Chemical mapping of a 207-nucleotide RNA with 2A3. Source: RMDB library M2RFOK, as collected in RNAgym. For 2A3, 407 sequencing reads were counted.
[RMDB]
RNA sequence: GGGAACGACUCGAGUAGAGUCGAAAAAUCCUCAGGUUCAUAAGCGUGAUGAUUGGGUGUUCAUGCUCCAUGCAUGACAUGUGCCUCCUUUGAACCUUGUUACGACCUUGCCACAUUACCCAUCUGAAAAAGACGUUCGCGUUCGCGCGAACGUCAACAACAGCCAGGAGUUCGCUCCUGGCUGUUGAAAAGAAACAACAACAACAAC
Reactivity to 2A3 in 0.01 (KOAc 150mM, MgCl2 10mM, bicine 150mM(pH8.5), 24C), signal-to-noise 1, nucleotides 027 to 156: a000u030c000c000u080c040a030g010g000u030u050c020a020u110a120a040g000c170g080u040g110a020u100g000a060u300u180g020g010g040u070g020u010u040c010a050u000g000c000u000c140c050a100u230g000c020a020u020g020a090c010a060u070g020u040g110c000c000u020c000c030u000u040u060g060a020a030c020c000u090u060g080u060u120a200c090g030a020c060c050u080u120g130c040c000a080c000a060u120u000a030c000c010c020a040u020c010u070g050a070a030a050a050a030g020a030c000g020u010u000c000g010c000g070u090u000c120g000c030g010c070g220a000a000c000g000u000c000a000a000